[RMDB]
RNA sequence: GGGAACGACUCGAGUAGAGUCGAAAACUUCCAGCGUUCGCGCUGGAAGAAAGGCCGAGUAGUGUUGGGUCGCGAAAGCCCAUAAAUCAACAAUCACUCAGAAAAUCGGUAUCUUCGGAUACCGAAACAGAAGGUUAUAGUUCGCUAUAACCUUCUGAAAAGAAACAACAACAACAAC
Reactivity to 2A3 in 0.01 (KOAc 150mM, MgCl2 10mM, bicine 150mM(pH8.5), 24C), signal-to-noise 6, nucleotides 027 to 126: c000u000u000c000c000a000g000c000g040u070u090c180g000c000g020c090u020g000g010a000a010g000a020a020a000g030g000c020c020g010a030g040u140a000g010u020g050u070u050g030g010g010u080c030g000c040g210a150a040a010g020c000c010c010a030u180a040a110a070u160c040a010a070c010a050a070u150c030a020c050u040c020a030g150a110a090a010a100u020c010g010g000u010a000u010c000u020u030c140g080g000a000u000a010c000c010g010a000a010a000
Reactivity to DMS in 0.01 (KOAc 150mM, MgCl2 10mM, bicine 150mM(pH8.5), 24C), signal-to-noise 6, nucleotides 027 to 126: c010u000u000c000c010a010g020c000g020u010u010c230g040c020g020c010u000g010g000a010a000g000a030a060a100g010g010c040c020g000a060g010u000a060g010u000g020u000u000g000g000g020u000c070g000c100g010a100a090a150g000c010c020c030a090u010a050a060a120u020c100a050a050c080a070a080u010c070a040c020u010c050a150g000a060a060a090a090u000c010g000g010u000a000u000c000u000u020c190g010g010a010u000a000c000c010g000a010a030a080